[RMDB]
RNA sequence: GGGAACGACUCGAGUAGAGUCGAAAAAGGGAGAGCUGUGCUUGUAGAGUGUGGUCACCCUGAACAGCGCAAACUGCUUGUGGAGCUCCAAGACUGGCAGACUUGGGAGGGGGAGCAUUUAGGGAAAGAGCAUACAUUCGUUCGCGGAUGUGUGCUCAAAAGAAACAACAACAACAAC
Reactivity to 2A3 in 0.01 (KOAc 150mM, MgCl2 10mM, bicine 150mM(pH8.5), 24C), signal-to-noise 9, nucleotides 027 to 126: a010g080g020g010a110g010a020g030c040u050g020u050g100c020u080u070g080u140a080g030a050g100u090g020u070g060g060u100c030a070c020c000c010u020g020a060a030c020a040g020c020g000c070a030a080a120c050u070g020c020u060u070g030u070g050g040a030g020c020u010c030c010a060a030g060a090c040u040g030g020c030a020g020a140c040u050u060g030g000g030a140g030g010g010g010g000a020g010c050a080u090u110u160a070g010g010g010a030a110a050
Reactivity to DMS in 0.01 (KOAc 150mM, MgCl2 10mM, bicine 150mM(pH8.5), 24C), signal-to-noise 9, nucleotides 027 to 126: a050g010g000g010a130g000a090g010c030u010g020u010g000c040u010u010g020u020a070g010a070g020u010g010u010g010g010u020c060a110c030c020c010u000g000a080a080c100a070g010c060g010c100a060a090a150c080u010g000c040u000u010g010u010g000g000a160g000c050u010c030c030a060a080g010a100c080u010g000g000c060a050g000a090c080u010u010g000g000g010a130g000g000g000g000g000a070g010c070a070u010u020u020a080g000g000g000a080a070a110